[RMDB]
RNA sequence: GGGAACGACUCGAGUAGAGUCGAAAAACAAAGAGCAACACGCGCACUCACGCAGGCAGAUGGAAUAAUCUGCCAAGAAUAACUAAUGGACGGUAGACUGCGCGAACCACCGACCAAUAGAAAAAAAGAUCACUAUCUUGUUCGCAAGAUAGUGAUCAAAAGAAACAACAACAACAAC
Reactivity to 2A3 in 0.01 (KOAc 150mM, MgCl2 10mM, bicine 150mM(pH8.5), 24C), signal-to-noise 2, nucleotides 027 to 126: a000c080a010a140a000g060a010g010c000a000a080c040a020c060g000c000g030c020a000c040u070c010a030c060g070c050a110g000g030c000a000g000a010u040g020g060a200a050u160a060a070u080c000u000g000c000c000a000a000g020a030a020u160a050a000c040u050a060a050u090g010g050a040c000g000g000u060a040g020a040c080u050g000c000g010c000g050a010a020c040c010a020c000c010g000a000c000c040a050a100u140a100g100a020a130a030a000a000a000a000
Reactivity to DMS in 0.01 (KOAc 150mM, MgCl2 10mM, bicine 150mM(pH8.5), 24C), signal-to-noise 1, nucleotides 027 to 126: a120c060a030a130a050g000a150g000c090a030a090c090a090c070g010c040g000c080a130c100u020c100a070c280g010c260a050g020g080c000a000g050a020u000g000g070a130a020u000a070a040u010c010u000g030c010c010a050a050g020a080a120u000a020a070c040u020a060a120u000g030g070a070c040g000g000u000a030g000a230c050u000g030c000g030c040g000a050a130c120c070a070c000c000g000a060c000c000a110a110u020a030g000a000a000a130a020a090a060a110